[RMDB]
The data come from the RNA Mapping Database (RMDB), library OK1LIB. Structure probing data (2A3) for a 177-nucleotide construct. For 2A3 the reverse transcriptase was SuperScript II with manganese. The reactions ran in a buffer of 150 mM KOAc, 10 mM MgCl2 and 150 mM bicine (pH 8.5), at 24 C.

RNA sequence: GGGAACGACUCGAGUAGAGUCGAAAACUAGUCAUGUUAAAUGGAAUUGGCAGCAUUGAUCGCGCUUCGAAACUGCCACCAAAUGCAUCAUUUGUCGUAAACUGGAACCUGAAGCCGGUCAAAAAUGACUCGCAUCGGUCUUCGGACCGAUGCGAGUAAAAGAAACAACAACAACAAC
Reactivity to 2A3 in 0.01 (KOAc 150mM, MgCl2 10mM, bicine 150mM(pH8.5), 24C), signal-to-noise 1, nucleotides 027 to 126: c000u000a050g000u040c000a030u030g070u180u300a200a180a110u030g000g140a160a300u220u090g000g000c020a000g000c180a300u000u120g050a000u070c000g000c010g000c000u030u000c000g140a260a030a000c000u000g000c000c000a000c000c000a040a020a040u230g000c070a010u040c000a110u000u090u140g140u030c070g050u140a050a050a050c090u110g030g000a000a030c050c000u000g000a030a010g070c000c000g000g000u000c000a000a080a000a000a000u240g000